[RMDB]
RNA sequence: GGGAACGACUCGAGUAGAGUCGAAAACACAAGUUGAUAGGCUGAUUACAGGUAGACUUACAGCACUUAAUGCAUUUGUGUCUCAGACUCUAACCAGACAAGCAGAGGUUAGGGCUAGUAGACAACUUGCCAAAGACAAGGUUAAUGAAUGUGUUAGAUUAUCGGUAGAGUUCGCUCUACCGAUAAUAAAAGAAACAACAACAACAAC
Reactivity to 2A3 in 0.01 (KOAc 150mM, MgCl2 10mM, bicine 150mM(pH8.5), 24C), signal-to-noise 8, nucleotides 027 to 156: c070a000c020a070a060g030u050u060g030a110u090a100g080g000c010u020g010a120u070u200a060c060a040g040g120u150a040g060a140c030u060u080a040c030a020g010c020a010c110u060u070a060a010u070g010c010a030u000u020u040g170u030g000u000c000u000c000a080g050a300c000u000c000u000a000a000c010c000a030g110a200c110a190a110g100c080a050g070a060g100g000u000u000a000g000g000g000c010u020a010g080u050a000g030a000c010a020a040c020u000u020g010c020c020a120a090a010g030a060c030a020a020g060g050u150u200a110a040u180g060a040a040u050g030u000g010u010u030a050g020
Reactivity to DMS in 0.01 (KOAc 150mM, MgCl2 10mM, bicine 150mM(pH8.5), 24C), signal-to-noise 3, nucleotides 027 to 156: c040a040c060a060a200g010u000u000g010a110u000a090g020g000c030u000g010a190u000u000a180c080a120g000g010u000a090g020a150c020u000u010a080c080a080g000c070a090c060u000u000a030a030u000g000c040a050u000u000u000g010u010g010u000c010u000c070a300g000a020c000u000c010u010a010a040c010c000a300g000a270c080a090a090g010c110a120g000a160g000g020u000u000a030g010g020g020c000u000a070g020u010a020g020a040c010a050a050c010u010u000g020c000c040a100a140a130g010a050c020a020a010g000g000u000u000a120a080u000g010a020a030u000g000u000g020u010u000a070g000
Overview: Chemical mapping of a 207-nucleotide RNA with 2A3 and DMS. Values are in units of 0.01, from 0 to 300, in steps of 10. The reactions ran in a buffer of 150 mM KOAc, 10 mM MgCl2 and 150 mM bicine (pH 8.5), at 24 C. The DMS profile rests on 5,507 reads. It was measured as part of the RMDB library OK3TST. High 2A3 reactivity points to a flexible backbone, as in loops and unpaired stretches.